[RMDB]
RNA sequence: GGGAACGACUCGAGUAGAGUCGAAAACUCCUUGGUCCUGGGUUUAUGCGUGCAUUUCCAAAGGGAGAUGCAUGCAUAAUCUGUCCGGUGAACCCGCCAGGCCCGGAAGGGAGCAACGGUGGCUGGAACCAAGGAUGCUAGGAGGGUGCGGGGACGACAUUACAAGGUGGUUCGCCACCUUGUAAUGAAAAGAAACAACAACAACAAC
Reactivity to 2A3 in 0.01 (KOAc 150mM, MgCl2 10mM, bicine 150mM(pH8.5), 24C), signal-to-noise 2, nucleotides 027 to 156: c010u000c000c000u020u030g000g010u040c040c070u030g010g000g060u030u050u000a000u000g020c000g000u000g000c010a010u010u010u000c040c030a220a300a220g300g010g000a010g000a000u000g000c000a000u000g010c000a000u000a000a000u000c040u050g130u010c030c010g010g030u050g060a110a070c020c020c020g000c000c000a010g020g000c000c000c000g110g050a110a110g000g000g020a010g030c020a010a030c010g000g070u060g070g000c020u020g000g000a030a030c000c000a010a020g000g010a020u040g060c020u030a030g000g050a020g030g060g020u070g030c080g010g020g000g020a030c060g010a020
Reactivity to DMS in 0.01 (KOAc 150mM, MgCl2 10mM, bicine 150mM(pH8.5), 24C), signal-to-noise 1, nucleotides 027 to 156: c030u000c000c000u000u000g020g010u000c000c030u000g000g000g000u010u000u000a000u000g000c020g070u000g000c010a000u000u000u000c010c000a100a200a250g070g020g020a050g010a010u000g010c000a010u020g020c010a000u000a010a000u000c030u000g020u000c030c000g070g020u000g000a170a190c150c000c000g000c000c080a300g010g000c010c020c040g030g030a140a140g000g000g010a070g010c020a140a050c000g000g010u000g040g000c010u000g010g010a030a020c010c020a050a020g010g030a020u010g060c060u020a200g010g020a180g000g000g030u010g070c040g010g010g020g000a130c080g000a180